[RMDB]
An RNA of 207 nucleotides, treated with DMS and 2A3 and read out base by base.
It was measured as part of the RMDB library OK3TST.
For DMS the reverse transcriptase was MarathonRT.

RNA sequence: GGGAACGACUCGAGUAGAGUCGAAAAAUUGCCCUGGCCAAAACCACCUGGAGCUUUUGAGCACUUGAGAAGAACUUACCCAGCUGGAUUUAUACAAGUAGAAAAGGCAAAGGUAUUGCUUGGGCUACCACCAGCAGAGAUCCCUAGGUAGGUGGGAAUUAUCGAUGCAUUUCGAUGCAUCGAUAAUAAAAGAAACAACAACAACAAC
Reactivity to DMS in 0.01 (KOAc 150mM, MgCl2 10mM, bicine 150mM(pH8.5), 24C), signal-to-noise 1, nucleotides 027 to 156: a110u020u000g010c020c030c010u000g060g010c010c070a060a020a180a040c040c060a030c060c000u050g020g000a230g060c020u000u000u000u000g020a210g020c050a020c100u020u000g000a080g000a070a240g000a070a060c070u000u000a090c060c020c040a160g000c020u000g030g020a230u000u000u000a120u000a120c100a060a080g020u020a070g010a180a030a220a110g010g030c000a100a080a120g000g000u000a050u000u000g010c060u010u000g070g010g010c010u000a090c010c020a090c030c010a100g010c010a150g000a230g000a150u000c000c000c020u020a070g000g030u000a030g010g050u000g010g030g000a140
Reactivity to 2A3 in 0.01 (KOAc 150mM, MgCl2 10mM, bicine 150mM(pH8.5), 24C), signal-to-noise 1, nucleotides 027 to 156: a030u100u120g050c000c000c000u010g010g010c030c040a050a070a100a070c030c000a010c020c020u070g130g040a130g040c000u070u060u010u120g070a080g000c030a030c000u040u050g030a020g040a110a030g010a070a050c050u050u040a040c050c010c010a050g020c070u010g010g080a040u030u130u090a100u070a020c060a050a000g000u030a020g070a020a070a060a000g000g020c000a070a060a000g050g000u050a070u050u100g000c010u030u010g020g000g000c030u050a040c000c010a000c000c000a010g050c000a000g030a010g030a130u010c030c000c030u010a010g080g030u040a050g000g020u020g010g010g000a010
DMS (dimethyl sulfate) methylates the pairing face of unpaired adenines and cytosines.